[RMDB]
An RNA of 177 nucleotides, treated with DMS and 2A3 and read out base by base.
Reactivities are given for positions 27 through 126.
The data come from the RNA Mapping Database (RMDB), library TTRDES.
The reactions ran in a buffer of 150 mM KOAc, 10 mM MgCl2 and 150 mM bicine (pH 8.5), at 24 C.
Values are in units of 0.01, from 0 to 300, in steps of 10.
DMS adducts were read by reverse transcription with MarathonRT.
RNA sequence: GGGAACGACUCGAGUAGAGUCGAAAAAAAAGAUAUGGAUCCGAGGCUCAUCGAUCAUAUGGGAACUGUAUAUCGGAAACGAUAUACUAAGUACCAUAUGGGAGAGCUCUCGGAUCCUAAGUCAAAAUCUUAUUGUCAUGUUCGCAUGACAAUAAGAAAAAGAAACAACAACAACAAC
Reactivity to DMS in 0.01 (KOAc 150mM, MgCl2 10mM, bicine 150mM(pH8.5), 24C), signal-to-noise 3, nucleotides 027 to 126: a100a060a140a100g000a040u000a170u010g000g000a010u000c000c000g010a010g010g010c000u000c010a270u010c250g000a090u010c000a000u000a010u000g010g010g000a150a080c210u000g000u000a000u000a000u000c000g020g000a040a040a060c000g010a000u000a000u000a000c010u000a020a020g010u000a240c000c000a010u000a000u000g010g010g000a030g000a000g000c000u010c010u000c010g000g010a000u000c000c000u000a000a070g000u000c000a090a100a100a110
Reactivity to 2A3 in 0.01 (KOAc 150mM, MgCl2 10mM, bicine 150mM(pH8.5), 24C), signal-to-noise 1, nucleotides 027 to 126: a000a000a000a000g070a020u040a070u080g000g010a000u020c010c000g010a000g000g000c010u020c020a140u300c150g030a040u030c000a000u000a010u020g050g000g000a090a000c020u040g000u010a000u000a000u010c000g000g010a000a010a010c000g000a000u000a000u000a020c000u030a090a030g030u040a010c000c000a000u000a000u000g030g010g000a050g000a020g000c030u030c010u000c030g020g000a000u000c000c000u000a000a000g000u000c000a000a000a020a300